[RMDB]
About this RNA
This 177-nucleotide RNA was probed chemically with 2A3 and DMS. Conditions: 150 mM KOAc, 10 mM MgCl2 and 150 mM bicine (pH 8.5), 24 C.
RNA sequence: GGGAACGACUCGAGUAGAGUCGAAAAAAGCAUGUCUCCCAAAGGCGGGAACCGGUUUUGGGAUAAAGACAUGCACGAAAACAAAAGUUUAAAGCGUGUCGUGUGUGUAUGAUAACAAGCGACAUGCUGCUAGUACGCUUUUCGAAGCGUACUAGCAAAAAGAAACAACAACAACAAC
Reactivity to 2A3 in 0.01 (KOAc 150mM, MgCl2 10mM, bicine 150mM(pH8.5), 24C), signal-to-noise 1, nucleotides 027 to 126: a000a000g000c000a000u010g000u000c000u060c010c000c000a000a000a000g120g000c030g000g070g100a090a160c070c010g070g000u000u070u000u000g020g000g010a010u140a080a200a000g010a000c000a000u010g000c010a000c010g050a020a070a010a010c130a040a040a010a020g040u040u170u190a040a160a000g060c010g000u010g000u000c020g000u040g010u030g010u010g000u110a060u150g070a070u160a150a000c000a000a040g000c010g000a030c000a000u000g000c000
Reactivity to DMS in 0.01 (KOAc 150mM, MgCl2 10mM, bicine 150mM(pH8.5), 24C), signal-to-noise 2, nucleotides 027 to 126: a010a050g020c020a000u010g000u010c000u000c000c010c000a000a000a010g020g000c000g020g030g000a230a120c000c040g010g010u000u030u000u000g020g040g000a090u040a090a080a000g030a050c000a020u000g040c000a030c190g000a080a090a040a100c210a030a040a180a140g010u050u100u000a040a040a020g040c050g000u000g000u000c000g030u010g020u070g030u010g010u000a120u020g030a110u020a060a010c000a020a170g000c060g040a000c000a000u000g000c030